[RMDB]
RNA sequence: GGGAACGACUCGAGUAGAGUCGAAAACGGGAGACUUAGCGGACCCACAAGACCCCAAAGCACACGCGGCCUCACACUCCGCGGACUCGGCUGACGAAAUCUCGGUCGAGAAUCUUAGCACGACGGGCAGUGCGGAUACGGUCCCGAUAAGUCAAGGAACACGCGGAUAAUUCGUUAUCCGCGUGUUAAAAGAAACAACAACAACAAC
Reactivity to 2A3 in 0.01 (KOAc 150mM, MgCl2 10mM, bicine 150mM(pH8.5), 24C), signal-to-noise 1, nucleotides 027 to 156: c000g010g060g030a110g020a040c000u020u020a020g010c040g030g000a040c020c110c050a060c070a060a070g120a230c020c000c000c000a100a120a000g060c010a020c000a020c070g000c010g010g000c000c000u080c010a020c000a000c030u000c000c040g000c000g000g050a030c000u000c000g000g000c040u010g030a000c050g110a110a090a200u140c050u000c010g010g040u000c010g000a020g010a010a100u030c080u090u200a020g030c000a000c060g130a010c100g020g000g020c010a000g030u000g020c070g040g000a060u170a110c010g000g040u130c090c010c000g020a040u020a050a000g020u010c080a060a040g140g010